Structure probing data (DMS and 2A3) for a 177-nucleotide construct. For 2A3 the reverse transcriptase was SuperScript II with manganese. Values cover nucleotides 27 to 126. The data come from the RNA Mapping Database (RMDB), library 15KREP. The 2A3 profile rests on 2,346 reads. For DMS the reverse transcriptase was MarathonRT.
RNA sequence: GGGAACGACUCGAGUAGAGUCGAAAAUAUUACAGCUUGUAAUUUAGGGGGCGCUGUUUGUAGGAAGCAUGCUACAGAGUACAGAGAGUAUAUGGAAGCAUAUAAUCUUGUCUCUGCAUCAGGUUUCGUAUUGAUAAUCGUUCGCGAUUAUCAAUACAAAAGAAACAACAACAACAAC
Reactivity to DMS in 0.01 (KOAc 150mM, MgCl2 10mM, bicine 150mM(pH8.5), 24C), signal-to-noise 3, nucleotides 027 to 126: u010a060u000u000a020c030a150g030c140u000u010g020u000a030a040u000u000u000a090g020g010g000g010g020c260g000c050u000g000u000u000u000g020u000a070g010g010a050a040g000c040a050u000g010c050u000a050c010a020g000a030g010u020a020c010a040g010a020g000a040g010u000a010u000a000u000g000g000a170a130g000c010a020u000a000u000a030a030u000c010u000u000g000u000c010u000c000u000g000c030a030u000c030a040g000g010u000u010u010c040
Reactivity to 2A3 in 0.01 (KOAc 150mM, MgCl2 10mM, bicine 150mM(pH8.5), 24C), signal-to-noise 2, nucleotides 027 to 126: u140a020u080u040a000c020a040g090c080u100u100g060u100a060a070u190u060u290a090g000g000g030g000g030c030g000c010u030g040u090u070u080g040u030a010g000g080a020a000g000c010a010u010g000c000u010a030c010a010g010a010g000u070a010c020a010g200a000g010a010g120u000a010u010a000u020g020g030a030a000g110c010a000u010a000u000a010a020u000c000u010u000g010u020c000u000c010u010g000c000a020u030c030a000g020g020u000u020u070c020